[RMDB]
RNA sequence: GGGAACGACUCGAGUAGAGUCGAAAAUGGUGACUUGCUCACUUACUUACUGGCUCCUGGGCACAGACAGGAACCAGCCUAGACGAUCCCAAACGGAGACUGCCCACACGGUCCCAUGGAAAGCAAGUCUCUCGUGUAAGUUCGCUUACACGAGAGAAAAAGAAACAACAACAACAAC
Reactivity to 2A3 in 0.01 (KOAc 150mM, MgCl2 10mM, bicine 150mM(pH8.5), 24C), signal-to-noise 1, nucleotides 027 to 126: u090g020g020u020g020a020c030u050u080g000c020u000c030a020c000u020u090a080c020u060u020a000c000u020g000g020c010u020c010c000u010g040g000g030c080a110c030a180g190a120c010a000g030g000a000a030c030c000a000g020c010c010u040a080g010a030c050g030a080u030c000c000c000a040a030a010c180g060g000a200g010a040c010u010g040c030c080c020a040c000a020c050g000g000u020c080c000c000a030u070g090g060a120a060a010g060c010a050a060g020
Reactivity to DMS in 0.01 (KOAc 150mM, MgCl2 10mM, bicine 150mM(pH8.5), 24C), signal-to-noise 2, nucleotides 027 to 126: u010g000g020u000g010a130c020u000u000g010c110u000c030a020c030u010u000a120c080u020u000a180c020u000g010g000c010u000c000c010u000g000g000g070c080a030c210a050g010a060c020a010g000g000a010a010c000c000a000g010c080c080u000a040g000a170c130g000a130u000c000c000c010a100a080a110c150g010g000a070g010a020c030u000g000c030c020c060a120c120a150c050g000g000u000c000c020c000a100u000g000g000a070a080a060g010c020a030a040g010
Chemical mapping of a 177-nucleotide RNA with 2A3 and DMS. DMS adducts were read by reverse transcription with MarathonRT. The reactions ran in a buffer of 150 mM KOAc, 10 mM MgCl2 and 150 mM bicine (pH 8.5), at 24 C. For DMS, 1,473 sequencing reads were counted.